Annotation:
This 177-nucleotide RNA was probed chemically with 2A3 and DMS. The RNA was probed in 150 mM KOAc, 10 mM MgCl2 and 150 mM bicine (pH 8.5) at 24 C. The data come from the RNA Mapping Database (RMDB), library OK2TRN. The DMS profile rests on 1,855 reads. Reactivities are given for positions 27 through 126.
RNA sequence: GGGAACGACUCGAGUAGAGUCGAAAAGUGAUCGAGCGCGCGCGUACGUACGAUCGAUCGUACUGCGCCAGUACUGCGCGACAUCAUGGCCGCACAGGCCCGUACGUACGUACGUACUGUAGUCACAGGCGCUGAAUAAAUUCGUUUAUUCAGCGCCAAAAGAAACAACAACAACAAC
Reactivity to 2A3 in 0.01 (KOAc 150mM, MgCl2 10mM, bicine 150mM(pH8.5), 24C), signal-to-noise 2, nucleotides 027 to 126: g000u010g000a030u090c080g060a010g060c010g000c020g000c010g000c010g000u000a010c000g000u000a000c020g030a110u220c130g010a020u040c140g010u040a120c080u140g010c000g060c020c000a030g040u120a150c160u130g010c000g000c010g000a000c000a000u030c010a060u080g010g000c030c010g000c020a230c030a250g000g010c000c020c000g000u000a000c000g000u020a010c020g000u010a000c000g040u010a020c020u030g110u170a030g030u020c000a020c000a030
Reactivity to DMS in 0.01 (KOAc 150mM, MgCl2 10mM, bicine 150mM(pH8.5), 24C), signal-to-noise 2, nucleotides 027 to 126: g000u000g010a000u000c110g020a100g000c020g000c010g030c020g060c020g010u010a000c050g010u000a010c000g000a190u000c290g000a020u000c100g030u020a050c060u010g000c000g000c020c220a060g010u000a070c190u000g000c010g000c000g010a070c120a010u010c040a050u010g000g030c000c010g020c270a070c220a150g000g010c000c000c020g000u000a020c010g010u000a030c050g000u000a050c040g020u010a030c020u000g010u000a160g000u010c000a030c040a120